Source information
Conditions: 150 mM KOAc, 10 mM MgCl2 and 150 mM bicine (pH 8.5), 24 C. This 207-nucleotide RNA was probed chemically with DMS and 2A3. For DMS, 6,765 sequencing reads were counted. Reactivities are given for positions 27 through 156. It was measured as part of the RMDB library OK3TST. For DMS the reverse transcriptase was MarathonRT.
[RMDB]
RNA sequence: GGGAACGACUCGAGUAGAGUCGAAAAACGAGGAUUUCUACGUUUGUAUGCUCACAGACAUGGGCAACUGCCAAAAGUUUAUACUGGAGGAACUAGAGAGGAUAUCCUCAAAGAGUGUCAUGGGGAAGGUGUUCGCCGCACAGAGUUCUCGAACUCGAUCACGUUAUCUUUUCGAAGAUAACGUGAUAAAAGAAACAACAACAACAAC
Reactivity to DMS in 0.01 (KOAc 150mM, MgCl2 10mM, bicine 150mM(pH8.5), 24C), signal-to-noise 4, nucleotides 027 to 156: a070c070g010a090g030g030a080u000u000u010c010u010a110c030g010u000u010u020g050u000a080u000g020c010u000c010a080c030a120g010a130c110a300u000g000g010g000c010a070a110c070u000g000c020c040a060a210a110a090g010u010u010u010a120u010a120c050u020g010g010a300g000g020a060a050c080u000a110g000a170g020a140g030g020a080u000a060u000c000c000u000c030a060a020a120g000a100g020u020g000u010c040a110u000g000g020g030g020a080a070g000g010u000g010u000u000c050g030c040c050g000c070a070c030a100g000a040g000u000u010c110u000c160g010a040a050c060u010c020g000
Reactivity to 2A3 in 0.01 (KOAc 150mM, MgCl2 10mM, bicine 150mM(pH8.5), 24C), signal-to-noise 6, nucleotides 027 to 156: a000c060g000a010g010g000a020u020u050u050c020u070a040c050g050u040u160u090g040u040a210u080g000c010u010c010a070c030a080g190a110c050a120u070g000g000g000c010a030a020c040u080g000c010c000a010a020a010a030g020u100u140u120a150u100a080c010u020g010g020a020g010g030a030a010c040u080a070g020a010g000a010g170g030a040u060a030u140c010c010u020c010a010a040a010g040a020g030u060g030u060c060a080u150g010g000g000g020a010a050g020g020u020g040u040u040c050g020c040c010g010c010a010c020a020g030a000g010u030u020c040u050c090g060a040a030c010u010c050g010